RNA sequence: GGGAACGACUCGAGUAGAGUCGAAAAUCCCCAUAGUUCGCUAUGGGGAAAAGCCGUACCGCGUUGCACGCGGAUAGGAGCGAAGAUAUCCACGGCACGCGAAAACCUUCGCCUUCGGGCGAAGGAAGGUAUUAACUACCUUCGGGUAGUUAAUACCAAAAGAAACAACAACAACAAC
Reactivity to DMS in 0.01 (KOAc 150mM, MgCl2 10mM, bicine 150mM(pH8.5), 24C), signal-to-noise 4, nucleotides 027 to 126: u000c000c000c000c010a010u000a000g010u000u010c220g030c010u000a000u000g010g010g020g000a010a010a050a120g010c000c010g000u010a120c170c030g010c010g010u000u030g050c010a120c000g030c040g010g010a020u000a020g010g020a160g010c150g000a100a100g010a150u000a020u000c010c000a020c020g000g020c010a020c000g000c000g010a050a070a120a130c000c000u010u000c000g000c000c000u000u020c180g030g010g020c000g000a000a000g010g020a020a010
Reactivity to 2A3 in 0.01 (KOAc 150mM, MgCl2 10mM, bicine 150mM(pH8.5), 24C), signal-to-noise 5, nucleotides 027 to 126: u000c000c000c000c000a000u000a000g020u030u050c220g000c090u000a000u000g000g000g000g010a020a040a020a020g060c010c010g080u120a100c050c040g010c020g100u100u190g060c150a170c240g000c020g000g000a000u010a000g030g030a060g100c090g090a080a040g030a160u040a010u040c000c000a000c010g000g000c000a000c020g000c010g050a050a020a020a070c000c010u000u000c000g010c000c000u050u100c290g110g000g000c010g000a000a000g010g010a000a020
The record gives the reactivity of an RNA of 177 nucleotides to DMS and 2A3. As a SHAPE reagent, 2A3 marks flexible, mostly unpaired nucleotides at the ribose 2'-OH. For DMS the reverse transcriptase was MarathonRT. The DMS profile rests on 4,318 reads. The 2A3 profile rests on 10,138 reads. The RNA was probed in 150 mM KOAc, 10 mM MgCl2 and 150 mM bicine (pH 8.5) at 24 C.